[RMDB]
RNA sequence: GGGAACGACUCGAGUAGAGUCGAAAAUAUACAUCAGAAGUCGGCACAACUCCCGACUCGCGGUGAGCGAUGCAGCGUAGCGCGAGCUACGCAGCUGCUGUGCGGAUGGCUAGCGUAUGCUAGCCUACAUAUAGCCGAUAUUCGUAUCGGCUAUAUGAAAAGAAACAACAACAACAAC
Reactivity to DMS in 0.01 (KOAc 150mM, MgCl2 10mM, bicine 150mM(pH8.5), 24C), signal-to-noise 9, nucleotides 027 to 126: u050a090u030a170c070a050u020c040a080g020a140a040g000u000c010g000g000c230a100c110a100a130c290u020c110c010c010g000a040c050u000c020g000c300g000g010u020g000a090g010c050g000a070u030g020c010a030g020c000g010u000a000g000c000g010c300g010a160g010c000u000a000c000g010c000a020g020c010u000g000c040u000g000u010g010c060g000g010a070u020g000g010c000u010a000g000c000g010u030a060u040g010c000u000a000g000c000c000u000a020
Reactivity to 2A3 in 0.01 (KOAc 150mM, MgCl2 10mM, bicine 150mM(pH8.5), 24C), signal-to-noise 9, nucleotides 027 to 126: u160a000u040a040c040a050u070c020a030g080a160a020g110u020c010g020g090c120a030c040a300a300c120u050c010c000c000g010a010c010u010c000g000c020g020g050u130g040a020g000c030g130a130u150g020c030a010g000c000g000u010a000g000c010g000c040g040a020g010c000u000a010c000g000c000a000g000c000u050g000c010u020g050u090g040c030g090g040a070u090g000g000c000u000a000g000c010g160u300a060u300g000c000u000a000g000c000c000u000a000
This 177-nucleotide RNA was probed chemically with DMS and 2A3. For DMS the reverse transcriptase was MarathonRT.